[RMDB]
The record gives the reactivity of an RNA of 170 nucleotides to 2A3 and DMS.
Conditions: 150 mM KOAc, 10 mM MgCl2 and 150 mM bicine (pH 8.5), 24 C.
The 2A3 profile rests on 5,083 reads.
The data come from the RNA Mapping Database (RMDB), library 15KLIB.

RNA sequence: GGGAACGACUCGAGUAGAGUCGAAAAUUUUAUUACUGCCAAUCCGGCAUGGAGUAAGGCAGUCUUUAUUUCGCCUUACAAUUCACAGAAUGCUGUGUCUCGUUCAAUGCUGGGUCUUACCACUCAGAAGGGUGGCUGUUCGCAGCCACCAAAAGAAACAACAACAACAAC
Reactivity to 2A3 in 0.01 (KOAc 150mM, MgCl2 10mM, bicine 150mM(pH8.5), 24C), signal-to-noise 3, nucleotides 027 to 129: u030u000u050u060a170u040u140a000c020u060g040c000c000a040a060u050c000c000g000g140c050a050u080g030g010a100g080u070a150a000g000g000c000a010g040u030c030u010u170u110a140u050u080u000c020g000c000c000u000u070a040c030a000a060u060u020c000a000c020a010g100a230a070u160g130c010u010g040u060g000u000c000u000c030g080u070u010c000a000a000u080g030c000u010g010g020g020u000c000u000u180a060c000c020a020c060u030c050a020g000a100a100g060
Reactivity to DMS in 0.01 (KOAc 150mM, MgCl2 10mM, bicine 150mM(pH8.5), 24C), signal-to-noise 2, nucleotides 027 to 129: u000u030u020u080a060u000u060a170c050u000g020c130c060a100a070u010c000c030g000g020c110a000u000g000g000a150g000u020a000a000g020g030c010a110g010u060c110u080u090u030a080u070u050u010c090g000c020c000u050u010a060c030a120a050u030u030c020a000c040a020g020a240a080u040g030c010u070g000u030g010u000c090u020c090g060u070u050c070a080a070u000g030c000u060g040g090g000u030c070u000u000a130c140c070a010c020u000c030a060g020a050a080g010